Chemical mapping of a 177-nucleotide RNA with 2A3 and DMS.
Conditions: 150 mM KOAc, 10 mM MgCl2 and 150 mM bicine (pH 8.5), 24 C.
The 2A3 profile rests on 4,559 reads.
It was measured as part of the RMDB library TTRDEL.
For DMS, 2,943 sequencing reads were counted.
[RMDB]
RNA sequence: GGGAACGACUCGAGUAGAGUCGAAAAGAUAUGGAUUAUUUCGCGAUAAGCUCAGUAUCGGAAACGAUACGAGCUUUUGACGCGAUUCAUCCUAAGUCAAACCCAUAACUGUUCGCAGUUAUGGGAACAGCUUGAUGUAGUUCGCUACAUCAAGCUGAAAAGAAACAACAACAACAAC
Reactivity to 2A3 in 0.01 (KOAc 150mM, MgCl2 10mM, bicine 150mM(pH8.5), 24C), signal-to-noise 2, nucleotides 027 to 126: g010a010u020a040u120g000g010a030u030u030a040u070u300u120c020g010c010g030a110u120a210a020g000c010u000c050a060g010u010a010u000c010g000g000a030a010a010c000g000a000u000a010c010g000a000g010c000u010u000u020u050g040a030c000g000c000g000a000u000u010c010a010u000c010c020u010a050a010g000u000c030a010a070a180c020c000c000a010u010a010a010c010u000g060u090u070c300g000c180a010g000u010u010a000u020g010g020g020a000a010
Reactivity to DMS in 0.01 (KOAc 150mM, MgCl2 10mM, bicine 150mM(pH8.5), 24C), signal-to-noise 3, nucleotides 027 to 126: g000a030u000a190u000g000g010a000u000u000a090u000u000u010c010g030c000g020a150u010a010a010g000c000u000c010a130g010u010a000u000c000g000g000a070a030a070c000g010a040u000a000c000g000a010g000c000u000u000u000u000g010a120c040g010c000g000a000u000u010c200a040u000c000c000u010a030a160g000u000c030a110a110a140c010c000c000a010u010a000a010c000u000g010u000u010c230g030c010a010g000u000u000a000u000g010g000g000a010a060